[RMDB]
An RNA of 207 nucleotides, treated with 2A3 and DMS and read out base by base. 2A3 is a SHAPE reagent: it acylates the 2'-hydroxyl of flexible nucleotides of all four kinds. Conditions: 150 mM KOAc, 10 mM MgCl2 and 150 mM bicine (pH 8.5), 24 C.
RNA sequence: GGGAACGACUCGAGUAGAGUCGAAAAAGACCACCUCUACGGAGGUGGUCAAGUCACGUAGCUAGUACCAGGUUGCAAUACUAGAGCGUUAGUCCUCGGGCGUACGGUGGCAGUACGCUGCCACCGAUAAAACUUGAAUACUUCGGUAUUCAAGUAAGAUAACUACCAUCUUCGGAUGGUAGUUAUCAAAAGAAACAACAACAACAAC
Reactivity to 2A3 in 0.01 (KOAc 150mM, MgCl2 10mM, bicine 150mM(pH8.5), 24C), signal-to-noise 2, nucleotides 027 to 156: a010g020a000c000c020a000c010c000u010c010u030a040c290g080g020a000g000g000u000g010g000u020c010a000a020g040u050c010a000c010g010u040a050g080c010u000a000g010u040a060c050c040a090g090g060u100u070g020c040a070a010u020a010c000u010a010g010a000g060c020g020u070u120a020g020u060c030c010u070c090g020g030g030c090g060u150a020c000g020g000u000g040g000c010a000g000u030a020c300g000c030u000g000c030c000a000c000c010g000a000u020a020a070a010a000c000u000u000g010a010a000u000a000c000u010u140c200g060g000u000a000u000u010c010a000a010g020u000a000a030
Reactivity to DMS in 0.01 (KOAc 150mM, MgCl2 10mM, bicine 150mM(pH8.5), 24C), signal-to-noise 1, nucleotides 027 to 156: a150g010a050c000c010a000c000c000u000c000u000a130c300g090g010a040g040g010u000g000g160u000c010a010a030g010u000c080a060c030g040u010a160g030c020u010a000g000u000a000c010c040a120g000g000u010u000g020c050a090a070u010a040c000u000a050g010a300g010c020g030u000u010a060g010u010c040c000u000c030g020g000g010c090g000u000a050c020g010g000u000g000g070c000a040g050u000a120c260g020c000u000g000c030c030a000c000c000g010a040u000a050a110a070a030c000u000u020g010a030a000u010a000c020u000u010c300g030g000u010a010u000u000c000a010a030g040u000a010a120